[RMDB]
RNA sequence: GGGAACGACUCGAGUAGAGUCGAAAACCUACUCAAUACGUCCUCGUCGUACAGAACGGUAACAUGUUUUCCGAACAUCCGCGCUUGGGUAUACGAGUAUACACCUUACCCAACCCACGCCAACGGGAGUGCAUCCACGAGUUCGCUCGUGGAUGAAGACACAUCAGAACUUCGGUUCUGAUGUGUCAAAAGAAACAACAACAACAAC
Reactivity to DMS in 0.01 (KOAc 150mM, MgCl2 10mM, bicine 150mM(pH8.5), 24C), signal-to-noise 1, nucleotides 027 to 156: c070c010u000a060c090u010c020a110a120u000a060c030g000u000c000c010u020c050g040u000c090g030u010a170c050a100g000a090a060c080g010g010u020a100a090c140a090u000g020u000u000u030u000c030c040g000a070a120c020a080u000c010c020g000c000g000c060u000u020g000g000g000u000a090u000a040c090g000a140g020u000a120u000a090c120a100c040c070u010u000a060c000c010c010a100a120c000c000c040a040c080g060c010c030a080a070c060g000g040g020a090g000u010g000c000a020u010c010c010a030c010g030a000g000u000u000c250g010c000u010c000g040u000g000g040a000u000g010a010a230
Reactivity to 2A3 in 0.01 (KOAc 150mM, MgCl2 10mM, bicine 150mM(pH8.5), 24C), signal-to-noise 5, nucleotides 027 to 156: c010c000u040a090c090u090c050a060a080u080a140c010g050u040c000c050u030c010g060u050c010g040u080a070c040a100g070a160a020c040g050g020u070a060a080c050a180u190g040u080u060u030u080c020c040g020a060a010c040a140u030c020c020g050c000g030c060u020u010g020g030g020u060a030u020a110c070g010a010g060u020a000u040a050c110a090c010c030u070u130a060c010c000c020a020a050c000c000c000a030c040g020c010c010a060a050c030g020g000g020a050g050u100g040c000a000u020c010c000a010c000g010a000g020u110u090c170g090c080u000c000g000u010g010g000a000u000g000a000a000
Structure probing data (DMS and 2A3) for a 207-nucleotide construct. The reactions ran in a buffer of 150 mM KOAc, 10 mM MgCl2 and 150 mM bicine (pH 8.5), at 24 C. 2A3 adducts were read by reverse transcription with SuperScript II with manganese. Source: RMDB library M2RFPK, as collected in RNAgym. The 2A3 profile rests on 2,774 reads.